[RMDB]
RNA sequence: GGGAACGACUCGAGUAGAGUCGAAAAGCAUGACUGUACGCAGUCAUGCAAGAAAAGAGCAAGGACCAGCUCAAUAAAGGUCCAAAAAGUACGAAAGUACAAACGGCCUCACUACGGUGAGGCCGAAAGUGAUAAAAUGGUUCGCCAUUUUAUCACUAAAAGAAACAACAACAACAAC
Reactivity to DMS in 0.01 (KOAc 150mM, MgCl2 10mM, bicine 150mM(pH8.5), 24C), signal-to-noise 2, nucleotides 027 to 126: g020c000a000u040g000a020c010u010g000u000a160c160g010c000a030g000u000c000a000u040g000c000a100a030g000a160a050a110a100g000a020g020c000a000a300g020g000a020c020c000a110g000c050u010c000a150a110u040a020a020a160g000g000u030c000c000a070a040a010a180a090g000u000a000c000g050a070a040a130g000u000a000c000a080a080a140c000g000g000c000c020u030c020a000c000u010a140c090g010g000u010g000a030g030g000c000c000g020a000a000
Reactivity to 2A3 in 0.01 (KOAc 150mM, MgCl2 10mM, bicine 150mM(pH8.5), 24C), signal-to-noise 2, nucleotides 027 to 126: g030c000a010u000g000a000c010u020g030u060a020c300g000c100a000g000u000c000a000u000g000c000a000a020g000a010a040a020a020g010a000g010c030a130a150g020g000a000c000c020a000g010c010u000c050a020a000u130a020a020a000g020g000u040c000c000a140a000a020a000a000g020u010a000c020g050a280a050a020g000u020a000c040a020a040a000c050g000g000c010c010u010c000a000c000u070a000c160g020g000u000g000a010g000g000c000c010g000a000a000
Background: Chemical mapping of a 177-nucleotide RNA with DMS and 2A3. The 2A3 profile rests on 4,549 reads. The RNA was probed in 150 mM KOAc, 10 mM MgCl2 and 150 mM bicine (pH 8.5) at 24 C.